RNA sequence: GGGAACGACUCGAGUAGAGUCGAAAAAUAAAACUGCGAAGGGGGGACGGAGAAGGCUAUGUUGGCCGGGCGACGGUAGUCCCGGUUUAAGCGUGUAGGCUGGUUUUCCAGGCAAAGAAAAAAAAAAACUAGAUACUAUGUUCGCAUAGUAUCUAGUAAAAGAAACAACAACAACAAC
Reactivity to DMS in 0.01 (KOAc 150mM, MgCl2 10mM, bicine 150mM(pH8.5), 24C), signal-to-noise 1, nucleotides 027 to 126: a080u020a080a060a090a040c150u010g010c080g040a080a050g010g030g000g000g010g010a030c040g010g010a120g000a060a080g020g000c040u000a050u010g020u020u000g000g040c000c020g020g000g010c300g010a050c180g000g030u020a120g000u000c010c000c000g010g020u010u000u000a070a100g020c050g000u010g050u010a040g020g030c050u010g010g010u000u000u000u010c030c050a140g010g010c090a030a030a120g000a020a020a000a000a000a030a110a050a070a080
Source: RMDB library M2PK90, as collected in RNAgym.
Structure probing data (DMS) for a 177-nucleotide construct.
Values cover nucleotides 27 to 126.
Conditions: 150 mM KOAc, 10 mM MgCl2 and 150 mM bicine (pH 8.5), 24 C.